Chemical mapping of a 207-nucleotide RNA with 2A3. For 2A3, 595 sequencing reads were counted. 2A3 adducts were read by reverse transcription with SuperScript II with manganese. Source: RMDB library M2RFPK, as collected in RNAgym.

RNA sequence: GGGAACGACUCGAGUAGAGUCGAAAAGACGCCUUUACAAGAAGAGGCUAGGGGGUAUUCCGGUGUGGGAUACUUAGUAAUAUGCAACGCUAAUUGCAUAAGAUUGUAGGACGGAAUUUACAGUCUUUAGAGAUAAGCACGUUCGCGUGCUUAUCAAGAAACUGCUAGACUUCGGUCUAGCAGUUUCAAAAGAAACAACAACAACAAC
Reactivity to 2A3 in 0.01 (KOAc 150mM, MgCl2 10mM, bicine 150mM(pH8.5), 24C), signal-to-noise 1, nucleotides 027 to 156: g140a000c050g000c000c020u130u140u100a070c080a200a060g230a050a030g010a030g040g000c030u020a050g010g040g020g000g000u060a010u030u000c020c010g060g130u240g010u140g060g020g000a010u010a050c000u020u040a020g000u020a020a150u020a050u110g010c000a010a010c080g010c120u090a040a140u100u000g000c000a010u000a050a020g030a080u070u080g000u050a020g090g050a000c030g010g050a050a070u150u100u010a040c010a020g020u000c000u010u110u110a180g020a000g000a080u000a040a000g020c010a000c000g010u060u100c190g020c020g090u000g020c000u000u010a000u000c000a000a000